[RMDB]
RNA sequence: GGGAACGACUCGAGUAGAGUCGAAAACUUUCCGAGAAUUCCUUUGAUGUUUCCUAGCCAGGGAUUUUCAUCCUCAAGUUUCUUGACUUUCUUCUCAACCUUCCGGAGGUCUCUCUUGAGUUCCUCUAACUUCUUUCUUCCGCUCACCCACUGCUCGCCCAUAUACAUGGUUCGCCAUGUAUAUGGGAAAAGAAACAACAACAACAAC
Reactivity to 2A3 in 0.01 (KOAc 150mM, MgCl2 10mM, bicine 150mM(pH8.5), 24C), signal-to-noise 2, nucleotides 027 to 156: c010u050u110u090c070c020g020a020g020a070a040u060u090c010c000u110u120u140g060a060u070g080u020u030u080c010c010u080a060g070c070c020a040g000g000g100a050u140u050u070u110c050a070u120c000c070u070c060a060a070g010u020u030u050c010u080u090g030a070c000u080u100u050c000u090u030c020u020c020a070a130c010c010u070u130c050c060g010g010a030g020g050u020c000u000c010u030c010u080u170g030a000g020u050u140c010c000u000c010u010a020a070c030u040u050c000u040u090u000c000u080u040c030c000g040c020u030c020a050c000c010c000a030c050u070g010c010u050c060g000